Chemical mapping of a 177-nucleotide RNA with 2A3. The reactions ran in a buffer of 150 mM KOAc, 10 mM MgCl2 and 150 mM bicine (pH 8.5), at 24 C. 2A3 adducts were read by reverse transcription with SuperScript II with manganese.

RNA sequence: GGGAACGACUCGAGUAGAGUCGAAAAGAAAGAACUUUGAGCACGGUUGAUCUCACCCUCCGGGGGGGCUAUAGAGAUCGCUGGAAACACUACCGGACAACCGGAACAUUGCAGAAAUGCAGCCCAAGUCUUCUCUGUCUUUCGAGACAGAGAAGACAAAAGAAACAACAACAACAAC
Reactivity to 2A3 in 0.01 (KOAc 150mM, MgCl2 10mM, bicine 150mM(pH8.5), 24C), signal-to-noise 2, nucleotides 027 to 126: g100a010a090a000g130a040a020c030u010u160u120g110a080g040c120a020c010g080g000u140u300g040a010u000c000u000c000a030c000c000c010u020c090c110g060g000g000g000g000g000g130c050u080a050u040a090g010a000g000a020u000c000g000c030u020g010g000a010a110a000c110a030c030u150a080c000c000g040g040a110c010a200a130c020c000g020g070a030a030c020a070u040u150g000c010a000g060a020a040a000u010g000c000a020g010c070c000c000a070a020